[RMDB]
RNA sequence: GGGAACGACUCGAGUAGAGUCGAAAAACGAGAAGAGCUCCGUCAGGACGACGUCACCCGCAACCAUGUCCAAGAAAGCGAGGGAUCAAUUGCCAACAGAGAGGAAGAGCAAGGCGACCAAAUUCACCGUUCCUGACAGCUUCGGCUGUCAGGAACGAAAAGAAACAACAACAACAAC
Reactivity to 2A3 in 0.01 (KOAc 150mM, MgCl2 10mM, bicine 150mM(pH8.5), 24C), signal-to-noise 1, nucleotides 027 to 126: a020c070g040a010g040a140a000g030a050g000c040u020c010c010g010u040c030a040g130g000a000c070g020a020c000g020u010c020a070c070c020c000g000c010a030a000c000c000a110u160g000u060c000c000a010a040g070a040a090a010g000c000g060a070g000g000g090a040u070c000a040a120u030u120g010c050c050a040a000c040a070g090a010g000a000g180g000a020a020g000a030g030c000a000a000g000g000c000g000a020c010c010a060a080a120u070u010c050a010c220
This 177-nucleotide RNA was probed chemically with 2A3. The reactions ran in a buffer of 150 mM KOAc, 10 mM MgCl2 and 150 mM bicine (pH 8.5), at 24 C. Reactivities are given for positions 27 through 126. 2A3 adducts were read by reverse transcription with SuperScript II with manganese.